[RMDB]
An RNA of 177 nucleotides, treated with DMS and read out base by base. The DMS profile rests on 795 reads. It was measured as part of the RMDB library OK2TST.

RNA sequence: GGGAACGACUCGAGUAGAGUCGAAAAUGCAUUUGUUAAUAGGCUUGUACCGAAGACAGCAAACUUCCAAUCUGGUUGUUCAGGAGUUUGUUUCAUAUGACUCCAGCAUACACUCUUAUUUUAUCACCAAGUGCCUAAUCUUCGGAUUAGGCACUUGAAAAGAAACAACAACAACAAC
Reactivity to DMS in 0.01 (KOAc 150mM, MgCl2 10mM, bicine 150mM(pH8.5), 24C), signal-to-noise 1, nucleotides 027 to 126: u010g020c030a070u010u000u010g060u010u000a090a130u010a170g000g010c050u010u000g020u020a210c050c040g000a140a120g000a050c030a070g020c050a040a050a050c090u000u000c030c030a100a110u000c050u010g020g010u000u010g000u000u000c130a070g010g000a050g000u000u000u010g010u010u020u020c110a150u000a120u000g000a010c020u010c010c020a070g000c130a130u010a050c050a070c050u010c060u000u010a050u000u000u000u000a040u050c130a080c200